An RNA of 177 nucleotides, treated with DMS and read out base by base. DMS adducts were read by reverse transcription with MarathonRT. It was measured as part of the RMDB library OK2TST.

[RMDB]
RNA sequence: GGGAACGACUCGAGUAGAGUCGAAAAACGCUGGCCAGCGCCGAGCCAGUCGCUCAGCGACUUGACCGCCACCUGGCCGUUGAGCAGCAAGCGCGUGCGCGCAUCGCCGCGCCCCUCGGCGACGAUAUAAAUCCACGCUAUUCGUAGCGUGGAUUUAAAAAGAAACAACAACAACAAC
Reactivity to DMS in 0.01 (KOAc 150mM, MgCl2 10mM, bicine 150mM(pH8.5), 24C), signal-to-noise 2, nucleotides 027 to 126: a130c090g030c010u010g030g030c000c050a120g010c020g010c050c020g020a130g020c000c010a020g010u010c090g010c010u000c050a060g010c000g000a030c040u010u010g010a100c060c060g030c060c060a060c130c060u010g010g030c030c040g020u000u000g000a050g010c060a150g040c180a120a050g010c030g010c040g040u010g030c050g000c160g010c210a110u000c030g020c020c020g010c010g000c010c020c020c020u000c040g000g000c010g000a090c190g010a090u020a100